RNA sequence: GGGAACGACUCGAGUAGAGUCGAAAAUUGACGCACCAUGCUAUUGCUUUAACGCUGAGGGUGAUGCAUCCUGGUCUUCUACUAUGAUCUUCUCUCUUCACCCCGUCGAGUGUGACGAGGAGUGUUCGUUACUAAUCGACUUCGGUCGAUUAGUAACAAAAGAAACAACAACAACAAC
Reactivity to DMS in 0.01 (KOAc 150mM, MgCl2 10mM, bicine 150mM(pH8.5), 24C), signal-to-noise 2, nucleotides 027 to 126: u000u000g010a070c100g010c020a060c030c020a050u000g010c020u000a110u000u000g030c040u010u000u010a120a100c180g010c020u010g000a070g010g000g050u000g010a050u000g000c060a060u000c020c100u000g010g010u010c020u010u010c030u000a040c060u000a090u010g010a090u000c030u000u000c030u000c020u000c130u000u000c010a070c000c010c010c040g010u000c020g000a110g030u010g020u020g010a020c030g000a060g000g010a110g020u000g000u000u000c110
Reactivity to 2A3 in 0.01 (KOAc 150mM, MgCl2 10mM, bicine 150mM(pH8.5), 24C), signal-to-noise 4, nucleotides 027 to 126: u060u070g050a030c030g010c010a020c010c010a030u070g000c030u060a080u150u090g020c020u130u040u150a130a020c090g010c030u020g030a040g010g060g000u020g020a040u040g000c000a040u040c000c020u030g040g020u030c000u080u020c010u030a060c000u030a110u200g030a060u000c000u070u000c010u000c000u030c000u100u080c020a030c020c010c030c020g010u010c030g020a140g170u180g010u120g070a010c010g000a090g030g010a170g010u020g040u030u020c030
This 177-nucleotide RNA was probed chemically with DMS and 2A3. Source: RMDB library 15KREP, as collected in RNAgym. Conditions: 150 mM KOAc, 10 mM MgCl2 and 150 mM bicine (pH 8.5), 24 C. For DMS, 2,395 sequencing reads were counted. For 2A3 the reverse transcriptase was SuperScript II with manganese.